[RMDB]
The record gives the reactivity of an RNA of 177 nucleotides to 2A3 and DMS. For DMS the reverse transcriptase was MarathonRT. For 2A3 the reverse transcriptase was SuperScript II with manganese. The data come from the RNA Mapping Database (RMDB), library TTRDES. Values cover nucleotides 27 to 126. For 2A3, 3,581 sequencing reads were counted. The reactions ran in a buffer of 150 mM KOAc, 10 mM MgCl2 and 150 mM bicine (pH 8.5), at 24 C.
RNA sequence: GGGAACGACUCGAGUAGAGUCGAAAAAAAAAGAUAUGGAACACCGAGGAUCUUCGGGAGGUGCAGAGGUUCGGAAACGAACCUCCAAUCACCAUCGAUCGAAGGGAGGUGUUCCUAAGUCAAAAAACAACGAAAUAUACUUCGGUAUAUUUCGUUGAAAAGAAACAACAACAACAAC
Reactivity to 2A3 in 0.01 (KOAc 150mM, MgCl2 10mM, bicine 150mM(pH8.5), 24C), signal-to-noise 1, nucleotides 027 to 126: a030a020a030a010a050g060a040u110a060u130g020g000a010a000c000a000c000c010g030a270g060g030a030u020c000u010u010c000g020g030g010a020g000g000u000g000c030a060g010a000g010g010u010u000c000g030g020a060a080a050c000g000a000a000c020c000u020c000c000a010a020u160c000a020c030c000a090u300c020g030a040u050c020g000a000a010g000g000g000a010g010g010u000g000u000u000c000c000u010a010a000g020u010c020a070a000a000a070a130a090
Reactivity to DMS in 0.01 (KOAc 150mM, MgCl2 10mM, bicine 150mM(pH8.5), 24C), signal-to-noise 3, nucleotides 027 to 126: a070a060a040a180a070g000a010u010a300u020g000g000a030a020c000a000c010c010g010a120g010g010a020u000c010u010u000c020g010g000g000a070g020g000u000g000c300a090g000a030g020g020u000u000c010g020g010a090a100a120c010g000a010a000c000c000u000c000c070a060a100u010c030a000c100c000a240u000c160g010a220u030c000g000a020a010g000g000g020a050g000g030u000g020u000u000c000c000u000a010a060g000u010c020a000a050a120a090a030a130